RNA sequence: GGGAACGACUCGAGUAGAGUCGAAAAGCUCGUCCACUCCGAUCGAGCCACUAGAAGCUAUCGGAACUCUUAGCGGAGUGACCAAAUCUCUCGACUUCAGUUGGACAUCGUGAGAUCGAGGUCCAAAGACGUUUGAUUCCUUCGGGGAUCGAACGUCAAAAGAAACAACAACAACAAC
Reactivity to DMS in 0.01 (KOAc 150mM, MgCl2 10mM, bicine 150mM(pH8.5), 24C), signal-to-noise 9, nucleotides 027 to 126: g010c020u010c050g000u010c060c100a110c080u010c020c030g000a050u010c130g020a050g000c010c040a140c100u010a080g000a050a110g010c080u010a050u010c080g000g000a300a070c030u010c020u010u010a120g020c160g000g000a030g010u010g000a060c030c040a100a090a050u010c040u000c020u000c030g010a090c130u010u010c030a110g030u020u030g000g010a030c170a100u010c000g010u010g000a090g010a070u020c040g000a130g010g010u000c010c060a030a060a080
Reactivity to 2A3 in 0.01 (KOAc 150mM, MgCl2 10mM, bicine 150mM(pH8.5), 24C), signal-to-noise 9, nucleotides 027 to 126: g020c000u010c010g030u030c030c020a040c020u000c000c000g010a030u060c050g040a010g020c000c010a040c030u070a050g040a060a010g040c020u040a030u100c030g010g020a040a040c010u010c010u050u080a020g030c020g030g010a020g010u040g030a050c010c010a030a050a060u030c040u000c000u020c020g050a050c020u070u040c070a110g030u110u100g050g000a010c010a030u000c010g020u040g060a050g000a020u060c020g030a030g010g020u000c000c000a020a030a030